An RNA of 177 nucleotides, treated with DMS and read out base by base.
Reactivities are given for positions 27 through 126.
Conditions: 150 mM KOAc, 10 mM MgCl2 and 150 mM bicine (pH 8.5), 24 C.
Source: RMDB library OK2TST, as collected in RNAgym.
For DMS, 1,208 sequencing reads were counted.
RNA sequence: GGGAACGACUCGAGUAGAGUCGAAAAAAAUUGAAGAUGCUGAAGAUUUUGAUUUGAAAUAUGAUGCAACACCAGAAUGGUUGUUUCAAUUGAGUACUGUUCAUGAUAUGGGGUUCAUAGAAGGAAGUGACAAACGUAGAUUCGUCUACGUUUGUCAAAAAGAAACAACAACAACAAC
Reactivity to DMS in 0.01 (KOAc 150mM, MgCl2 10mM, bicine 150mM(pH8.5), 24C), signal-to-noise 2, nucleotides 027 to 126: a050a050a080u000u020g010a120a050g020a120u010g040c030u010g020a210a170g000a050u000u000u000u000g010a110u010u010u030g000a000a030a070u000a010u000g020a180u000g020c030a070a140c090a070c000c050a160g010a080a060u010g020g040u000u000g030u000u000u010c010a010a160u000u010g010a120g010u000a070c050u000g000u010u010c060a060u000g000a080u010a100u030g010g000g000g010u000u010c040a010u020a070g000a110a060g020g010a120a100g010